[RMDB]
RNA sequence: GGGAACGACUCGAGUAGAGUCGAAAAUACUUGACCACGAGGGCUCCCCUAUAGUCUGCUUUGGCGGUGCGGCAGGCCCCGUGCGAUAGGCUAACUGCGGUAUUCCCCGCACUCCGUCGAGCGGUUACGUGGUUACGCCUUUCGAGGCGUAACCACGAAAAGAAACAACAACAACAAC
Reactivity to 2A3 in 0.01 (KOAc 150mM, MgCl2 10mM, bicine 150mM(pH8.5), 24C), signal-to-noise 1, nucleotides 027 to 126: u110a010c000u000u050g030a000c000c000a010c030g030a300g010g000g000c000u070c010c070c000c000u110a080u020a180g230u090c010u030g010c030u000u160u080g080g000c010g000g000u000g020c020g000g030c010a050g030g030c050c000c000c000g010u030g030c000g070a070u050a020g010g000c030u040a060a020c070u070g000c000g020g040u080a030u050u060c010c010c090c000g000c010a050c000u060c020c020g050u100c040g000a040g010c000g060g040u000u160a020
Chemical mapping of a 177-nucleotide RNA with 2A3. The 2A3 profile rests on 560 reads. Conditions: 150 mM KOAc, 10 mM MgCl2 and 150 mM bicine (pH 8.5), 24 C.